[RMDB]
RNA sequence: GGGAACGACUCGAGUAGAGUCGAAAACGCGCUAGAGAUGUACAUGGGUUUGCCCCCUUAUCUGUGUACUAUCUCGUUUCAUACGCCUGGGAUAGGUUGAGUGGGGGCGGUCUGGGCUUGGCGCGAAGUGUAUUAAUAUUUUCGAAUAUUAAUACACAAAAGAAACAACAACAACAAC
Reactivity to 2A3 in 0.01 (KOAc 150mM, MgCl2 10mM, bicine 150mM(pH8.5), 24C), signal-to-noise 4, nucleotides 027 to 126: c010g000c000g000c010u060a040g020a020g030a170u060g100u150a080c050a180u040g000g040g050u060u070u300g010c000c010c010c000c020u050u180a220u060c040u000g210u010g060u170a070c020u010a010u000c010u000c000g000u040u150u070c150a150u170a140c120g030c020c060u060g010g000g000a010u010a040g110g010u110u100g030a040g020u070g000g010g000g000g000c010g000g020u000c000u000g000g050g010c000u020u060g010g000c000g000c010g020a050a020